[RMDB]
RNA sequence: GGGAACGACUCGAGUAGAGUCGAAAAUCACGGGCUAUACCUGUGAUGUAAAACCCACAUACUAUACUACAUUGCACUGUGUACUAGUAUGGAUAGGGCACUAAUCUUUACUCUAUUUAGUGCAAAAUUUAAGCCUAGGAUUCGUCCUAGGCUUAAAAAAAGAAACAACAACAACAAC
Reactivity to 2A3 in 0.01 (KOAc 150mM, MgCl2 10mM, bicine 150mM(pH8.5), 24C), signal-to-noise 6, nucleotides 027 to 126: u010c000a010c000g000g010g000c090u140a020u120a290c000c000u010g000u000g000a000u000g010u010a030a030a040a040c000c000c000a010c000a000u000a000c000u020a010u010a020c020u050a000c020a050u050u220g110c100a030c120u020g020u000g010u030a010c040u020a040g010u000a000u010g010g010a060u110a120g070g020g010c020a000c030u030a010a070u040c060u050u250u200a090c050u050c030u090a160u170u110u030a000g000u010g010c020a000a000a010a110
Reactivity to DMS in 0.01 (KOAc 150mM, MgCl2 10mM, bicine 150mM(pH8.5), 24C), signal-to-noise 8, nucleotides 027 to 126: u000c000a000c000g010g010g010c200u050a100u040a300c000c000u000g010u000g000a010u000g010u010a080a050a140a140c000c000c000a170c000a010u010a000c000u010a020u000a070c250u040a020c010a020u020u020g010c140a070c130u010g000u000g000u010a010c220u000a010g000u000a000u000g000g000a140u030a060g000g010g000c040a030c070u000a040a040u020c190u010u040u030a120c120u030c130u010a060u010u010u010a010g010u000g000c010a050a040a060a080